This 177-nucleotide RNA was probed chemically with DMS.
RNA sequence: GGGAACGACUCGAGUAGAGUCGAAAAGAAGUACAGUUCGCUGUACUUCAAAUUCCCACCACCCCCGCCGCCGCCGCCGCCUCCACCGCCGCCACCACCAAAAAAGCAUUUAGUUCGCUAAAUGCAAGUUAACACUUUUCUUCGGAAAAGUGUUAACAAAAGAAACAACAACAACAAC
Reactivity to DMS in 0.01 (KOAc 150mM, MgCl2 10mM, bicine 150mM(pH8.5), 24C), signal-to-noise 1, nucleotides 027 to 126: g010a020a010g000u000a000c010a010g000u000u010c240g000c000u000g020u000a000c000u010u000c000a000a080a290u000u000c010c000c000a300c140c130a300c010c000c000c010c000g020c110c020g000c030c010g020c030c040g090c040c050g000c010c020u000c000c040a080c050c070g020c040c000g020c010c010a050c060c020a120c060c030a000a010a050a100a150a050g000c000a010u000u010u000a020g010u010u020c170g020c010u000a000a010a010u010g010c000a020a040

The reactions ran in a buffer of 150 mM KOAc, 10 mM MgCl2 and 150 mM bicine (pH 8.5), at 24 C. Source: RMDB library M2PK50, as collected in RNAgym.